[RMDB]
Description:
Chemical mapping of a 170-nucleotide RNA with 2A3 and DMS. It was measured as part of the RMDB library 15KLIB. The reactions ran in a buffer of 150 mM KOAc, 10 mM MgCl2 and 150 mM bicine (pH 8.5), at 24 C.

RNA sequence: GGGAACGACUCGAGUAGAGUCGAAAAAAGGGGGACUCCGGGACGCCUUGCAUGUUGGGGACGAAGCCGCCCCCGGGCGCUCCCCUCGAUCCACCUUCGAGGGGGUUCACACCCCCAGUCGGCGGGCAAAGACCCGACUUCGGUCGGGUCAAAAGAAACAACAACAACAAC
Reactivity to 2A3 in 0.01 (KOAc 150mM, MgCl2 10mM, bicine 150mM(pH8.5), 24C), signal-to-noise 3, nucleotides 027 to 129: a000a000g000g000g000g000g000a010c050u030c020c010g040g000g000a050c050g010c000c000u010u090g080c140a110u220g000u080u160g040g000g000g010a020c030g060a040a030g010c020c030g050c040c020c000c010c000g000g000g000c030g010c050u060c000c000c000c000u000c000g020a010u030c020c050a060c010c050u000u020c010g010a200g000g000g000g050g020u070u060c030a030c000a000c040c000c000c000c000a040g010u000c010g000g000c020g000g000g000c020a030a030a020
Reactivity to DMS in 0.01 (KOAc 150mM, MgCl2 10mM, bicine 150mM(pH8.5), 24C), signal-to-noise 3, nucleotides 027 to 129: a210a000g000g000g000g000g000a060c080u010c070c160g030g010g010a100c050g040c000c000u020u030g000c100a090u000g050u000u100g030g000g010g000a000c030g000a070a080g010c120c030g030c040c010c010c020c020g000g000g000c000g020c100u020c020c000c020c040u020c070g000a200u000c060c070a020c090c030u040u070c020g000a130g010g000g000g000g010u020u020c220a110c070a130c110c010c020c030c000a080g000u010c000g020g000c000g000g000g000c070a110a070a080